[RMDB]
RNA sequence: GGGAACGACUCGAGUAGAGUCGAAAAGAGGAUACGAAUAGCUUCGUGCUUUCGAUAGCUUAGUAGCGGCGGCUACGUACCCUAGGGGAGCCGCCUCCCCUGCUAUCGGCGCGAGGGGAGUAUCCGAGCUAGCCCGUAUAUUCGUAUACGGGCUAGCAAAAGAAACAACAACAACAAC
Reactivity to 2A3 in 0.01 (KOAc 150mM, MgCl2 10mM, bicine 150mM(pH8.5), 24C), signal-to-noise 3, nucleotides 027 to 126: g140a050g000g020a000u010a020c020g060a150a170u140a210g140c020u020u010c010g010u010g020c020u110u200u200c010g020a010u000a000g010c020u120u140a010g010u060a010g100c020g030g010c010g010g000c010u060a060c110g100u120a080c030c000c010u040a050g020g060g010g000a000g040c020c000g040c000c020u020c000c000c000c000u010g000c000u010a010u000c000g020g000c000g000c010g010a000g020g010g000g010a040g000u010a010u000c000c000g020a000
Reactivity to DMS in 0.01 (KOAc 150mM, MgCl2 10mM, bicine 150mM(pH8.5), 24C), signal-to-noise 3, nucleotides 027 to 126: g020a260g000g010a020u000a010c020g000a160a160u020a150g010c010u000u000c000g030u000g000c030u000u000u010c070g020a030u010a010g000c020u000u000a050g020u010a050g020c100g020g010c050g000g000c010u000a070c130g010u020a160c030c030c060u010a170g020g020g010g000a060g020c000c040g000c060c000u000c010c040c040c030u000g020c000u000a010u000c020g010g000c030g010c000g010a020g020g000g010g000a220g010u000a000u000c000c000g010a100
The record gives the reactivity of an RNA of 177 nucleotides to 2A3 and DMS. Conditions: 150 mM KOAc, 10 mM MgCl2 and 150 mM bicine (pH 8.5), 24 C. Reactivities are given for positions 27 through 126. It was measured as part of the RMDB library OK2TRN. The 2A3 profile rests on 6,250 reads. For 2A3 the reverse transcriptase was SuperScript II with manganese.